Source: RMDB library OK2TST, as collected in RNAgym. Chemical mapping of a 177-nucleotide RNA with 2A3 and DMS. For DMS, 1,147 sequencing reads were counted.
[RMDB]
RNA sequence: GGGAACGACUCGAGUAGAGUCGAAAAUUAGGCCAGAGCUUAGAACAGGACUGCAGAAGCAAGCAUGGAAUGGAAGCACAUCUGGUGAUCUGUGACACACAACGAGCCUGCAGAUCACAGGCAAUGACUUGACAUAGAGCUUCGGCUCUAUGUCAAGAAAAGAAACAACAACAACAAC
Reactivity to 2A3 in 0.01 (KOAc 150mM, MgCl2 10mM, bicine 150mM(pH8.5), 24C), signal-to-noise 1, nucleotides 027 to 126: u040u030a080g000g080c030c000a000g000a020g000c020u070u170a050g000a130a010c040a020g000g080a000c030u030g000c000a010g020a090a030g070c010a000a020g000c030a040u080g000g050a080a100u080g030g050a000a010g020c030a040c000a180u010c070u100g080g050u020g010a010u000c000u040g070u010g040a030c010a000c010a000c000a060a300c050g020a000g110c000c010u030g040c020a030g000a080u000c000a000c000a020g050g000c030a000a090u170g040a060
Reactivity to DMS in 0.01 (KOAc 150mM, MgCl2 10mM, bicine 150mM(pH8.5), 24C), signal-to-noise 2, nucleotides 027 to 126: u010u000a130g010g000c000c040a030g030a190g000c050u040u000a080g000a120a100c090a070g000g010a070c060u010g010c090a070g000a070a090g010c040a020a090g010c090a050u000g000g000a050a130u020g000g020a070a060g010c040a020c100a090u020c020u000g010g020u000g020a000u000c000u000g000u010g000a050c030a060c140a050c150a100a140c250g040a090g050c010c020u020g000c050a000g020a070u020c050a090c020a070g000g000c190a080a060u000g000a110